[RMDB]
Chemical mapping of a 207-nucleotide RNA with 2A3 and DMS.

RNA sequence: GGGAACGACUCGAGUAGAGUCGAAAAUCAUCUAAUUUGAUCAUCACCACAGCCGAUCAAUUAUCUCCAUUCCAAGCAACAGAGGUUCUAAAAACUUAAGUGGUACAUUUACAAGGCUCGUAAGUGGCAGAGAUGGGAGACAAAUCAGGUCCAAUAAACUGGCUGAUUUAUUCGUAAAUCAGCCAGUAAAAGAAACAACAACAACAAC
Reactivity to 2A3 in 0.01 (KOAc 150mM, MgCl2 10mM, bicine 150mM(pH8.5), 24C), signal-to-noise 2, nucleotides 027 to 156: u020c010a010u010c020u140a070a060u140u020u100g040a030u000c010a010u060c010a010c070c000a030c080a050g060c050c020g080a020u010c010a000a030u110u020a020u050c020u020c040c020a000u040u040c000c040a090a020g020c000a020a090c000a070g000a060g090g040u050u000c050u120a110a030a010a080a030c060u120u080a070a030g000u040g070g000u020a020c000a000u000u040u030a090c080a020a010g040g000c020u030c030g060u110a110a090g040u020g080g000c050a030g010a010g000a110u050g000g050g000a050g000a010c030a000a090a020u070c000a000g020g060u000c030c000a050a000u300a300a050
Reactivity to DMS in 0.01 (KOAc 150mM, MgCl2 10mM, bicine 150mM(pH8.5), 24C), signal-to-noise 1, nucleotides 027 to 156: u020c010a080u040c080u000a130a060u000u050u000g000a020u000c020a110u000c030a120c020c050a080c110a220g030c010c050g000a090u000c050a010a090u010u010a110u000c010u050c010c020a200u000u000c010c010a160a120g080c000a060a060c020a130g030a040g040g030u000u000c050u000a040a120a060a020a060c080u020u000a080a120g020u000g040g000u000a050c040a050u000u000u020a070c020a080a070g000g020c050u000c060g000u000a050a120g000u000g020g020c030a200g000a060g000a080u000g040g020g050a100g000a090c030a040a030a100u000c070a040g020g010u000c030c070a020a050u000a050a050

DMS adducts were read by reverse transcription with MarathonRT. Conditions: 150 mM KOAc, 10 mM MgCl2 and 150 mM bicine (pH 8.5), 24 C. Reactivities are given for positions 27 through 156. The 2A3 profile rests on 873 reads.